[RMDB]
RNA sequence: GGGAACGACUCGAGUAGAGUCGAAAAGAUAUGGAUACCACGAGCUUUUGACGAGCUGCAGUCGGAAACGACUGAUAGCUCGAUAAGCUCAGUGGUAUCCUAAGUCAAACCAGGGCUUCGGCCCUGGGACACAAAUACCCUUCGGGGUAUUUGUGUCAAAAGAAACAACAACAACAAC
Reactivity to 2A3 in 0.01 (KOAc 150mM, MgCl2 10mM, bicine 150mM(pH8.5), 24C), signal-to-noise 3, nucleotides 027 to 126: g000a010u060a020u190g010g000a000u010a020c000c000a000c010g000a000g060c030u120u240u300u300g300a180c040g010a000g000c020u020g000c000a000g000u010c000g010g070a070a110a050c000g000a000c020u010g050a220u070a000g000c010u000c010g000a000u000a010a000g010c000u000c030a000g000u000g020g000u000a010u010c000c000u010a010a000g020u040c030a050a050a070c010c000a000g010g000g000c030u130u160c300g230g000c010c000c000u000g000g010
Reactivity to DMS in 0.01 (KOAc 150mM, MgCl2 10mM, bicine 150mM(pH8.5), 24C), signal-to-noise 3, nucleotides 027 to 126: g020a040u000a300u010g010g010a020u000a000c000c010a010c020g000a000g020c000u000u010u000u000g020a280c150g010a000g010c010u010g010c020a010g030u000c000g010g000a150a090a250c010g010a030c000u010g010a050u010a000g010c010u000c010g020a060u010a010a010g010c010u000c010a060g040u000g000g010u010a000u010c000c000u000a020a080g010u000c020a080a140a300c000c000a030g000g000g000c010u000u000c250g030g000c010c010c000u000g000g010

This 177-nucleotide RNA was probed chemically with 2A3 and DMS. It was measured as part of the RMDB library TTRDES. 2A3 adducts were read by reverse transcription with SuperScript II with manganese. For DMS, 2,152 sequencing reads were counted. For 2A3, 4,320 sequencing reads were counted.